[RMDB]
RNA sequence: GGGAACGACUCGAGUAGAGUCGAAAAGAUAUGGAGGAUGAUUGACAUGACGACUAAUCGGAAACGAUUAGCGUCAACAGCAAUAUCCUCCUAAGUCAAAAGGCCUUUAAGUUCGCUUAAAGGCCAACAUGCUUCUUAACUUCGGUUAAGAAGCAUGAAAAGAAACAACAACAACAAC
Reactivity to 2A3 in 0.01 (KOAc 150mM, MgCl2 10mM, bicine 150mM(pH8.5), 24C), signal-to-noise 4, nucleotides 027 to 126: g000a000u020a020u060g010g000a020g030g000a020u100g060a030u190u020g000a050c230a300u300g000a010c080g220a300c000u000a010a000u010c010g000g000a030a000a000c000g000a000u010u000a000g000c010g000u010c010a010a020c080a000g000c000a000a010u000a010u010c000c000u000c000c010u000a000a010g000u010c000a000a020a100a180g000g000c000c000u020u000u000a030a030g020u050u210c300g020c230u010u010a000a000a000g010g000c000c000a010a000
Reactivity to DMS in 0.01 (KOAc 150mM, MgCl2 10mM, bicine 150mM(pH8.5), 24C), signal-to-noise 4, nucleotides 027 to 126: g010a010u010a090u010g000g000a020g010g020a010u000g000a030u000u000g010a060c120a180u010g000a010c000g010a220c000u000a000a000u010c010g010g010a020a020a050c000g030a020u000u000a010g010c000g010u000c000a050a060c270a190g000c000a010a000u000a040u000c000c000u000c000c000u000a000a080g000u000c010a130a100a170a130g000g020c000c000u000u000u000a000a000g010u000u010c300g010c010u000u000a000a010a010g010g010c010c000a010a040